Description: An RNA of 177 nucleotides, treated with DMS and 2A3 and read out base by base. As a SHAPE reagent, 2A3 marks flexible, mostly unpaired nucleotides at the ribose 2'-OH. The DMS profile rests on 913 reads. For 2A3 the reverse transcriptase was SuperScript II with manganese. The 2A3 profile rests on 1,867 reads. It was measured as part of the RMDB library M2PK50. DMS adducts were read by reverse transcription with MarathonRT. The reactions ran in a buffer of 150 mM KOAc, 10 mM MgCl2 and 150 mM bicine (pH 8.5), at 24 C.
RNA sequence: GGGAACGACUCGAGUAGAGUCGAAAACAGUUACACUUCGGUGUAACUGACAGGCGAUCCCAGCAUCAACAUCAACAACAGGGAGAUGCAUCCCUAACGCCAAAACCGCGCGCUUCGGCGCGCGGAAUGAUAUAUCUACCUUCGGGUAGAUAUAUCAAAAAGAAACAACAACAACAAC
Reactivity to DMS in 0.01 (KOAc 150mM, MgCl2 10mM, bicine 150mM(pH8.5), 24C), signal-to-noise 1, nucleotides 027 to 126: c010a000g000u000u020a000c000a000c000u000u030c100g090g010u050g000u000a000a000c000u000g020a070c230a090g020g000c030g020a180u000c000c000c000a100g000c000a000u000c000a050a120c130a110u000c130a180a080c180a160a060c180a000g000g000g000a160g000a070u000g000c010a080u000c000c000c000u030a100a170c010g000c020c010a020a140a000a200c000c060g000c040g110c000g140c080u000u000c090g010g150c030g190c040g270c070g060g000a000a000
Reactivity to 2A3 in 0.01 (KOAc 150mM, MgCl2 10mM, bicine 150mM(pH8.5), 24C), signal-to-noise 1, nucleotides 027 to 126: c000a000g010u000u000a000c000a000c000u050u110c240g120g000u030g000u020a000a000c000u000g010a020c030a090g030g000c000g000a050u020c010c010c000a010g030c000a020u050c000a020a130c020a070u140c050a030a210c020a040a070c000a180g090g030g030a080g000a040u060g020c040a070u070c010c000c000u040a030a010c010g010c020c000a060a010a030a020c010c020g050c030g000c030g040c020u060u090c300g120g000c040g070c030g070c000g020g000a000a010